The data come from the RNA Mapping Database (RMDB), library TTRDEL. Chemical mapping of a 177-nucleotide RNA with 2A3 and DMS. 2A3 adducts were read by reverse transcription with SuperScript II with manganese. Values are in units of 0.01, from 0 to 300, in steps of 10. The 2A3 profile rests on 2,478 reads. DMS adducts were read by reverse transcription with MarathonRT. The RNA was probed in 150 mM KOAc, 10 mM MgCl2 and 150 mM bicine (pH 8.5) at 24 C.

[RMDB]
RNA sequence: GGGAACGACUCGAGUAGAGUCGAAAAGAUAUGGAAUCGGGGAGCUCUCUGGUCGGAAACGACCAACGUGAGAGCUUUGAUCCAGAUUCCUAAGUCAAACUAAGUAUUACUUCGGUAAUACUUAGAACAAGAAGUUGAAGUUCGCUUCAACUUCUUGAAAAGAAACAACAACAACAAC
Reactivity to 2A3 in 0.01 (KOAc 150mM, MgCl2 10mM, bicine 150mM(pH8.5), 24C), signal-to-noise 1, nucleotides 027 to 126: g010a000u020a010u180g000g000a010a000u010c010g020g000g000g020a020g010c000u000c000u000c030u030g000g040u000c000g020g020a050a090a060c010g010a010c030c020a000a020c100g240u180g040a020g000a000g040c000u000u060u010g020a000u030c010c070a020g020a020u010u010c000c000u000a130a010g060u060c070a050a080a100c030u000a000a020g000u000a010u010u020a000c000u020u090c300g090g010u000a010a000u000a000c000u000u000a010g000a030a060
Reactivity to DMS in 0.01 (KOAc 150mM, MgCl2 10mM, bicine 150mM(pH8.5), 24C), signal-to-noise 3, nucleotides 027 to 126: g000a050u000a300u000g000g000a020a020u000c000g010g010g000g000a020g020c000u000c000u010c000u010g020g000u000c000g010g000a090a120a170c010g000a000c000c000a030a040c300g040u010g010a010g000a000g020c000u000u000u010g010a060u010c000c000a190g010a010u000u000c000c000u000a020a060g010u000c040a100a110a290c000u000a010a010g000u000a010u000u000a000c000u000u010c230g030g010u010a000a000u000a000c000u010u000a000g010a110a200